Chemical mapping of a 207-nucleotide RNA with 2A3. Values cover nucleotides 27 to 156. High 2A3 reactivity points to a flexible backbone, as in loops and unpaired stretches. The 2A3 profile rests on 1,587 reads.

RNA sequence: GGGAACGACUCGAGUAGAGUCGAAAAUGUGAUGCAGGUCGAGAGUGGGUCUCCUCUCGCAAAUCAAAGAUCCAAACAAAAUGUAACUGCGAACAACAUCGUUCCUUUCGCUCGCAAAGCUGCUGCUGUAGCUUAAUAAGAACACCUUAACUUAGGUCGUUGCAGAAAAGUUCGCUUUUCUGCAACGAAAAGAAACAACAACAACAAC
Reactivity to 2A3 in 0.01 (KOAc 150mM, MgCl2 10mM, bicine 150mM(pH8.5), 24C), signal-to-noise 2, nucleotides 027 to 156: u070g000u010g040a040u070g000c030a010g070g090u100c000g000a000g000a000g000u060g000g000g000u010c010u000c020c010u010c000u000c030g110c110a020a020a000u060c030a040a010a010g020a000u050c020c000a080a060a010c090a020a180a080a050u220g030u100a080a050c070u080g000c000g040a020a010c030a020a040c010a130u060c030g010u000u010c000c000u000u070u030c080g000c020u010c010g060c060a100a000a040g030c040u020g030c010u040g010c030u080g000u010a010g000c000u050u070a060a010u090a210a050g050a040a010c020a060c030c030u120u130a140a100c040u060u070a020g010g050u020